Conditions: 150 mM KOAc, 10 mM MgCl2 and 150 mM bicine (pH 8.5), 24 C. The record gives the reactivity of an RNA of 177 nucleotides to DMS and 2A3.
RNA sequence: GGGAACGACUCGAGUAGAGUCGAAAACGGAUAGCACGGAAACGUGCUAUCCGAAAAUAGGGGUGUCAGGGCUCUGGAGCCCCCCCCGAGCCCCGGCUAACUCUAUGAUUAGGGGGGCAAAACAAAACAGUAUUAUACCAUUCGUGGUAUAAUACUGAAAAGAAACAACAACAACAAC
Reactivity to DMS in 0.01 (KOAc 150mM, MgCl2 10mM, bicine 150mM(pH8.5), 24C), signal-to-noise 1, nucleotides 027 to 126: c000g000g000a010u010a010g030c010a000c000g010g010a060a150a160c000g030u000g000c000u000a000u000c000c000g000a000a000a060a070u000a060g000g000g020g030u000g000u000c050a040g000g000g010c010u000c040u020g000g000a210g010c000c020c010c010c000c020c000c100g000a030g000c010c000c000c030g030g010c010u020a030a110c020u000c060u000a020u020g000a140u010u010a100g000g020g040g000g010g010c040a010a020a040a100c120a050a100a080a190
Reactivity to 2A3 in 0.01 (KOAc 150mM, MgCl2 10mM, bicine 150mM(pH8.5), 24C), signal-to-noise 2, nucleotides 027 to 126: c000g000g000a010u000a000g000c010a010c000g000g040a080a060a020c000g000u010g020c000u000a010u020c000c000g010a010a000a000a010u100a000g000g030g030g010u210g010u050c010a000g010g020g000c010u030c050u100g070g040a060g040c020c000c010c010c000c010c000c000g000a000g010c000c010c000c010g010g030c020u040a130a030c000u000c010u040a070u100g080a110u120u230a050g010g010g000g010g020g010c020a030a090a000a000c040a000a070a010a010

For 2A3, 3,261 sequencing reads were counted. For DMS, 1,427 sequencing reads were counted.